[RMDB]
RNA sequence: GGGAACGACUCGAGUAGAGUCGAAAAUUGAAUGAACUCCUAGGGAAGCAAGGGAACCCACAGCAAAUCCAAAGAGCCCCUGCAAGCUUAGCAAAUCUUUCACACAGACAAGUUGUGGGCUGUCAUGAUCAGUCUAAUACUUCGGUAUUAGACUGAUAAAAGAAACAACAACAACAAC
Reactivity to 2A3 in 0.01 (KOAc 150mM, MgCl2 10mM, bicine 150mM(pH8.5), 24C), signal-to-noise 2, nucleotides 027 to 126: u060u040g090a070a140u050g030a050a050c030u000c010c000u000a020g010g040g020a070a010g060c050a030a060g020g000g040a070a040c020c020c010a010c020a030g060c020a040a110a080u010c040c000a080a120a070g050a030g020c020c020c010c000u000g050c030a040a080g030c000u070u110a040g020c010a020a080a130u030c040u030u140u100c040a010c010a010c000a060g050a040c020a080a090g000u060u020g000u050g000g030g010c030u060g020u040c020a070u090g070
Reactivity to DMS in 0.01 (KOAc 150mM, MgCl2 10mM, bicine 150mM(pH8.5), 24C), signal-to-noise 5, nucleotides 027 to 126: u000u010g030a120a110u010g010a110a110c140u000c020c020u000a110g010g000g020a110a120g010c060a070a070g000g000g010a090a100c040c010c030a030c050a040g010c070a050a110a100u020c070c060a060a150a140g000a080g020c050c010c020c040u000g000c060a080a110g000c030u000u000a060g020c050a030a080a080u010c060u000u000u000c090a080c120a090c160a070g010a030c090a050a120g000u000u000g020u000g000g010g010c050u000g000u000c070a060u010g000
The data come from the RNA Mapping Database (RMDB), library OK2TRN.
The record gives the reactivity of an RNA of 177 nucleotides to 2A3 and DMS.
For 2A3, 1,851 sequencing reads were counted.
The reactions ran in a buffer of 150 mM KOAc, 10 mM MgCl2 and 150 mM bicine (pH 8.5), at 24 C.
The DMS profile rests on 3,462 reads.